Conditions: 150 mM KOAc, 10 mM MgCl2 and 150 mM bicine (pH 8.5), 24 C. Chemical mapping of a 177-nucleotide RNA with 2A3 and DMS.
RNA sequence: GGGAACGACUCGAGUAGAGUCGAAAAGCUGUUCUGUUCGCAGAACAGCAAAGGCAAGCAUCUCAAGCAUUUCAAGGUAGGGAGCACCAAGCAUUUCAAAAAAAACGGAUAAGUUCGCUUAUCCGAAGGUUUCUAAUUGGUUCGCCAAUUAGAAACCAAAAGAAACAACAACAACAAC
Reactivity to 2A3 in 0.01 (KOAc 150mM, MgCl2 10mM, bicine 150mM(pH8.5), 24C), signal-to-noise 1, nucleotides 027 to 126: g010c000u020g000u010u000c000u010g070u010u130c270g000c070a000g000a000a020c000a000g000c000a010a010a000g060g000c030a060a010g040c040a190u000c020u000c030a000a070g000c000a060u050u210u140c060a070a020g070g000u020a030g070g000g040a000g030c010a030c030c000a010a030g040c000a070u070u240u280c180a030a050a040a020a010a030a010a010c010g040g010a000u000a030a000g030u020u120c120g060c080u000u010a000u000c000c020g000a010a020
Reactivity to DMS in 0.01 (KOAc 150mM, MgCl2 10mM, bicine 150mM(pH8.5), 24C), signal-to-noise 1, nucleotides 027 to 126: g010c000u000g000u000u000c000u000g030u000u020c300g030c000a030g020a000a000c000a020g030c020a030a060a060g010g000c080a070a080g000c050a000u010c030u000c090a010a200g010c050a050u000u000u000c110a050a010g030g030u000a050g000g000g000a050g050c100a030c010c030a080a090g000c080a120u000u000u000c020a000a000a030a060a150a050a090a140c030g000g010a030u000a000a000g000u010u030c230g030c000u000u000a000u010c020c010g000a040a020
For DMS, 828 sequencing reads were counted. DMS (dimethyl sulfate) methylates the pairing face of unpaired adenines and cytosines. For 2A3, 1,181 sequencing reads were counted. Source: RMDB library M2PK50, as collected in RNAgym.